[RMDB]
RNA sequence: GGGAACGACUCGAGUAGAGUCGAAAACGCCUGCUGUUCAUGGCCAGCCAUCCGGAGCGCUUCGCCGACGCGGUGGUGGUGGAGAUCGUCGGCUACAGCGACGAGCAGGGCGAAUCGCCGUUCUGGAUGGAUUAAUUAGGUUCGCCUAAUUAAUCCAAAAAGAAACAACAACAACAAC
Reactivity to 2A3 in 0.01 (KOAc 150mM, MgCl2 10mM, bicine 150mM(pH8.5), 24C), signal-to-noise 4, nucleotides 027 to 126: c040g020c000c000u040g040c040u060g080u140u110c070a080u140g080g000c020c020a030g070c010c010a030u000c000c030g060g010a090g050c030g010c060u120u140c070g010c030c010g010a050c020g030c090g070g050u090g020g010u060g030g070u120g020g080a130g010a090u110c020g010u000c000g030g020c020u070a070c050a080g070c010g010a030c020g010a030g020c020a050g000g090g000c000g030a020a040u110c090g030c100c010g040u050u010c010u020g020g010a020
Reactivity to DMS in 0.01 (KOAc 150mM, MgCl2 10mM, bicine 150mM(pH8.5), 24C), signal-to-noise 7, nucleotides 027 to 126: c160g010c020c010u000g010c030u000g020u010u010c090a080u000g010g000c040c050a180g010c020c030a050u000c040c030g010g010a140g010c030g010c070u000u010c180g010c040c000g000a100c050g010c120g010g020u010g010g020u000g000g020u000g000g010a100g000a100u000c030g000u000c010g010g010c060u000a070c150a090g010c020g000a040c040g000a060g010c070a100g000g000g010c010g010a060a060u000c090g020c050c050g010u000u000c000u010g010g000a300
An RNA of 177 nucleotides, treated with 2A3 and DMS and read out base by base.
Reactivities are given for positions 27 through 126.
The RNA was probed in 150 mM KOAc, 10 mM MgCl2 and 150 mM bicine (pH 8.5) at 24 C.